[RMDB]
RNA sequence: GGGAACGACUCGAGUAGAGUCGAAAAUGUGAGGCUGGGAAAGCCCCACAAGCUCGAAUACAUCCGGGCACUCAUCCACGAGCACCAGAAGACCGGCGCCGUGGGCGAAGUCGCAGAGGAAAUCAACGUCUAAUCGUAAAUUCGUUUACGAUUAGACAAAAGAAACAACAACAACAAC
Reactivity to DMS in 0.01 (KOAc 150mM, MgCl2 10mM, bicine 150mM(pH8.5), 24C), signal-to-noise 5, nucleotides 027 to 126: u010g020u030g010a010g000g020c000u000g010g030g000a160a210a040g000c010c000c010c000a010c020a040a110g010c050u000c020g000a140a110u010a160c190a090u010c050c010g020g000g020c010a070c030u010c010a050u010c020c010a020c010g000a180g020c020a040c010c000a110g010a160a170g020a140c300c100g010g020c060g010c010c010g020u000g000g000g000c050g000a040a040g010u010c150g020c040a040g000a140g010g000a060a080a090u000c140a120a120c220
Reactivity to 2A3 in 0.01 (KOAc 150mM, MgCl2 10mM, bicine 150mM(pH8.5), 24C), signal-to-noise 6, nucleotides 027 to 126: u030g000u000g000a000g000g000c020u040g040g140g180a300a230a040g010c010c000c000c000a010c000a000a030g020c000u020c040g050a130a100u150a210c040a120u010c040c000g010g090g000c010a010c020u010c020a030u010c010c000a010c020g010a070g010c010a020c010c010a040g090a300a050g100a300c070c170g000g000c000g000c010c010g020u010g000g000g000c020g030a060a040g040u090c110g000c040a040g070a080g230g040a020a070a140u120c040a090a060c070